[RMDB]
The record gives the reactivity of an RNA of 177 nucleotides to DMS and 2A3.
Conditions: 150 mM KOAc, 10 mM MgCl2 and 150 mM bicine (pH 8.5), 24 C.

RNA sequence: GGGAACGACUCGAGUAGAGUCGAAAAGUAAAUGCAGGUUCACAGCGCUUCGUAUCGCGGCAAUAUCGCCAGUGGUGCUGUCGUGAUGCGGUCUUCGCAUGGACCGCACAAUGAAGAUACGGUGCUUGUAUUUACUGCCUUUCGAGGCAGUAAAUACAAAAGAAACAACAACAACAAC
Reactivity to DMS in 0.01 (KOAc 150mM, MgCl2 10mM, bicine 150mM(pH8.5), 24C), signal-to-noise 2, nucleotides 027 to 126: g010u030a060a070a110u000g000c040a050g010g000u000u000c070a020c080a140g000c150g010c220u000u000c040g000u000a070u000c010g030c030g000g020c010a010a100u030a070u030c040g000c120c220a210g040u020g000g030u000g000c020u000g000u010c010g020u000g000a030u000g020c010g010g000u020c050u040u010c180g000c100a230u040g000g000a000c010c020g000c000a010c110a080a050u030g000a070a050g000a040u010a060c050g040g000u040g000c040u000u020
Reactivity to 2A3 in 0.01 (KOAc 150mM, MgCl2 10mM, bicine 150mM(pH8.5), 24C), signal-to-noise 5, nucleotides 027 to 126: g070u080a000a050a050u100g030c050a060g020g040u030u040c020a040c040a100g020c020g010c040u060u080c020g000u010a010u010c000g000c000g010g000c000a030a050u030a050u100c020g050c140c120a180g060u180g190g000u030g000c010u010g010u000c000g030u030g000a050u020g000c020g000g010u030c060u120u120c050g010c040a030u090g000g000a000c000c010g000c000a000c040a000a170u170g050a060a030g010a040u080a080c040g040g030u050g020c030u010u020
It was measured as part of the RMDB libraries RFM100 and RFMREP.